Structure probing data (DMS and 2A3) for a 207-nucleotide construct. For DMS the reverse transcriptase was MarathonRT. The RNA was probed in 150 mM KOAc, 10 mM MgCl2 and 150 mM bicine (pH 8.5) at 24 C. The DMS profile rests on 2,344 reads.

RNA sequence: GGGAACGACUCGAGUAGAGUCGAAAAAUCCUCAGGUUCAUAAGCGUGAUGACUGGGUGUUCAUGCUCCAUGCAUGACAUGUGCCUCCUUUGAACCUUGUUACGACCUUGGCACAUUACCCAUCUGAAAAAGACGUUCGCGUUCGCGCGAACGUCAACCCUAAAAGACUGUUCGCAGUCUUUUAGGGAAAAGAAACAACAACAACAAC
Reactivity to DMS in 0.01 (KOAc 150mM, MgCl2 10mM, bicine 150mM(pH8.5), 24C), signal-to-noise 1, nucleotides 027 to 156: a090u000c010c000u000c070a050g000g020u000u000c020a050u000a030a070g040c020g040u000g020a130u010g010a040c070u010g050g030g060u000g000u000u000c000a010u000g000c000u020c270c240a200u000g020c000a010u010g000a000c260a150u000g000u000g000c000c000u000c050c070u000u000u000g020a040a030c010c020u020u000g000u000u010a200c070g000a120c140c040u010u000g000g000c020a050c030a050u000u000a070c000c000c000a070u010c050u030g000a070a100a060a150a200g010a020c020g020u000u000c010g090c030g080u010u000c300g000c020g030c000g020a020a000c000g050u000c000a000a020
Reactivity to 2A3 in 0.01 (KOAc 150mM, MgCl2 10mM, bicine 150mM(pH8.5), 24C), signal-to-noise 3, nucleotides 027 to 156: a010u040c010c000u010c010a010g000g000u010u010c010a010u080a230a110g070c170g060u160g080a060u060g050a080c070u070g040g010g010u050g040u120u070c000a000u000g010c000u090c190c110a110u200g000c000a010u000g000a020c000a020u020g010u000g010c000c010u060c010c020u020u000u030g010a000a010c000c000u010u090g110u030u140a150c110g040a090c050c080u080u120g000g010c000a010c000a000u050u130a020c050c010c010a020u000c020u070g060a040a040a040a050a080g000a000c000g000u000u010c000g010c010g010u030u030c070g050c000g000c000g090a010a000c000g000u000c000a000a010